[RMDB]
RNA sequence: GGGAACGACUCGAGUAGAGUCGAAAACAAUCAACAAUAUGGUUUGUGUAGUUAUGCUGAAAAUCGUUGAGGUUGUAUGGAAUAGGUUAACCGUAAGACCUUAAGGUGAAAAACUUUAAAAUUAAUCAAAAUCAUGUACACUUCGGUGUACAUGAAAGCACCGAUAUAAGUUCGCUUAUAUCGGUGCAAAAGAAACAACAACAACAAC
Reactivity to 2A3 in 0.01 (KOAc 150mM, MgCl2 10mM, bicine 150mM(pH8.5), 24C), signal-to-noise 2, nucleotides 027 to 156: c010a010a100u100c020a010a080c020a120a100u120a070u210g090g020u000u100u110g020u040g000u060a030g050u060u090a040u190g010c030u070g090a040a050a080a090u060c040g050u000u020g000a020g020g030u050u000g050u030a080u100g020g090a110a100u040a120g050g000u060u070a050a060c010c010g010u030a130a000g010a020c010c000u000u010a020a030g030g000u040g090a050a000a040a110a000c010u100u080u130a050a080a040a070u140u140a040a040u130c020a010a080a030a150u040c000a000u000g010u000a000c010a000c010u000u040c110g050g030u010g000u000a000c000a000u000g010a000a000a000